The record gives the reactivity of an RNA of 177 nucleotides to DMS and 2A3.
2A3 adducts were read by reverse transcription with SuperScript II with manganese.
It was measured as part of the RMDB library OK2TST.
RNA sequence: GGGAACGACUCGAGUAGAGUCGAAAAUGCUGGAAAACACGGAGCUUGGGCUCCUGCAAGAUUCUUUAUUCCAGCCUACCGUCAGUUAUUCCUAGGAGGUUUAGCCUUCGGUCUCGUAUUCAUGGCGCGACUCAACGAGAUUCGUCUCGUUGAGUCGAAAAGAAACAACAACAACAAC
Reactivity to DMS in 0.01 (KOAc 150mM, MgCl2 10mM, bicine 150mM(pH8.5), 24C), signal-to-noise 2, nucleotides 027 to 126: u000g020c010u000g000g000a050a040a120a130c160a110c290g020g000a010g000c000u000u010g040g040g010c020u000c010c010u010g010c100a090a110g000a100u020u000c080u030u010u010a130u040u000c020c000a010g000c000c130u010a070c040c000g020u020c100a040g020u000u010a060u000u000c000c000u000a070g040g020a120g010g010u000u010u000a110g010c020c000u000u000c020g030g000u000c080u020c100g000u010a080u020u010c080a090u000g010g000c040g040
Reactivity to 2A3 in 0.01 (KOAc 150mM, MgCl2 10mM, bicine 150mM(pH8.5), 24C), signal-to-noise 1, nucleotides 027 to 126: u060g000c000u000g000g000a050a000a030a020c080a070c100g020g020a000g090c030u090u240g300g300g000c000u030c000c000u020g000c060a030a030g010a100u230u190c070u100u300u150a090u130u000c000c000a000g000c000c000u070a080c010c010g030u020c010a010g010u040u090a030u130u030c000c000u050a090g000g080a030g150g000u070u140u130a020g040c000c000u010u060c040g000g000u020c020u010c100g030u030a200u090u140c120a100u190g080g020c010g000